Notes
The record gives the reactivity of an RNA of 207 nucleotides to DMS and 2A3. For DMS the reverse transcriptase was MarathonRT. For 2A3 the reverse transcriptase was SuperScript II with manganese. For 2A3, 713 sequencing reads were counted. The RNA was probed in 150 mM KOAc, 10 mM MgCl2 and 150 mM bicine (pH 8.5) at 24 C.
RNA sequence: GGGAACGACUCGAGUAGAGUCGAAAACGUUACGGUACACCCCUUUUAGUCGGAACAGUUGAGGACAAAAACGAUGUGACAGAUAUGACACGCCUUUUAAAAAACAUCAAUGGUAUGACUGGUCUUGGUUUAUCUGGAGGCGCAAAAGUAGAGGCUAAGAACCUGAUAAUUUCGAUUAUCAGGUUCUAAAAGAAACAACAACAACAAC
Reactivity to DMS in 0.01 (KOAc 150mM, MgCl2 10mM, bicine 150mM(pH8.5), 24C), signal-to-noise 2, nucleotides 027 to 156: c040g020u000u000a040c010g040g020u010a090c050a140c030c010c030c020u000u000u030u000a120g010u000c050g020g010a060a060c060a090g010u000u020g010a040g010g030a150c050a060a020a090a070a070c070g020a110u000g020u000g000a210c050a070g020a160u000a040u000g010a050c000a070c180g030c030c000u000u010u000u010a010a090a040a100a050a020c020a060u010c040a030a100u000g010g010u000a060u000g010a070c050u000g010g010u000c080u000u000g000g020u000u000u000a070u020c060u010g000g010a080g020g020c020g020c060a010a040a070a100g010u000a050g010a050g010g040c060u010a120
Reactivity to 2A3 in 0.01 (KOAc 150mM, MgCl2 10mM, bicine 150mM(pH8.5), 24C), signal-to-noise 1, nucleotides 027 to 156: c070g040u070u100a050c070g000g030u050a000c020a010c020c000c000c040u040u060u040u100a030g000u040c080g020g020a050a010c020a060g010u040u020g070a040g040g030a000c020a020a040a000a030a000c060g050a020u030g040u050g080a030c000a000g040a040u080a070u180g030a020c000a020c060g060c000c020u140u160u120u200a050a200a000a000a000a000c070a020u060c000a010a110u090g080g000u080a020u110g030a030c020u000g000g030u010c030u030u040g020g070u060u060u050a040u090c000u030g060g000a010g030g000c060g000c030a060a070a000a000g000u000a020g020a010g020g010c010u040a070